[RMDB]
RNA sequence: GGGAACGACUCGAGUAGAGUCGAAAAAAGAUGGACUCGUACUCUCCACUUCAUUGCUUGAUUGCAUGCUAAUCAGAUUCUUCCUUUCUCUCGCCGGGUAGCCGUUGCUGCUUAAGCGAGUUUCUAGUGCCACUUUGUCACUAGUUUGUAUUAUGAGGUAUGUAUGGUGCUUCGGCACCAUACAUACAAAAGAAACAACAACAACAAC
Reactivity to 2A3 in 0.01 (KOAc 150mM, MgCl2 10mM, bicine 150mM(pH8.5), 24C), signal-to-noise 1, nucleotides 027 to 156: a000a000g060a010u080g000g010a010c010u040c040g010u080a080c000u050c010u040c010c010a010c040u070u000c090a080u030u090g040c000u030u050g080a140u020u210g080c010a080u010g000c020u130a070a030u160c040a040g010a120u010u160c030u030u010c040c000u130u170u040c060u000c000u000c020g030c020c020g010g000g010u010a000g000c010c040g220u140u210g000c040u000g000c000u030u000a060a000g000c000g030a030g050u010u040u010c000u000a000g000u000g000c000c030a050c030u240u030u220g000u000c060a010c010u010a080g000u000u080u090g050u000a130u090u010a190u300g150a040g100
Reactivity to DMS in 0.01 (KOAc 150mM, MgCl2 10mM, bicine 150mM(pH8.5), 24C), signal-to-noise 1, nucleotides 027 to 156: a060a070g010a110u000g000g000a010c010u020c100g030u000a090c090u000c010u020c020c030a110c070u000u000c070a070u010u000g040c030u000u000g020a110u010u000g010c020a110u010g030c100u030a070a110u000c020a160g000a060u000u000c030u000u000c040c020u010u010u000c080u000c000u010c050g010c000c020g030g020g010u000a050g050c030c180g020u000u010g020c010u000g000c000u000u000a070a090g010c030g000a030g040u010u000u000c000u010a010g000u000g000c020c110a120c140u020u000u000g020u000c010a030c000u010a030g000u000u050u000g040u010a140u010u010a180u000g000a140g030
The data come from the RNA Mapping Database (RMDB), library ARCHII. This 207-nucleotide RNA was probed chemically with 2A3 and DMS. 2A3 is a SHAPE reagent: it acylates the 2'-hydroxyl of flexible nucleotides of all four kinds. The DMS profile rests on 2,124 reads. The reactions ran in a buffer of 150 mM KOAc, 10 mM MgCl2 and 150 mM bicine (pH 8.5), at 24 C. High DMS reactivity at an A or C suggests that its Watson-Crick edge is free.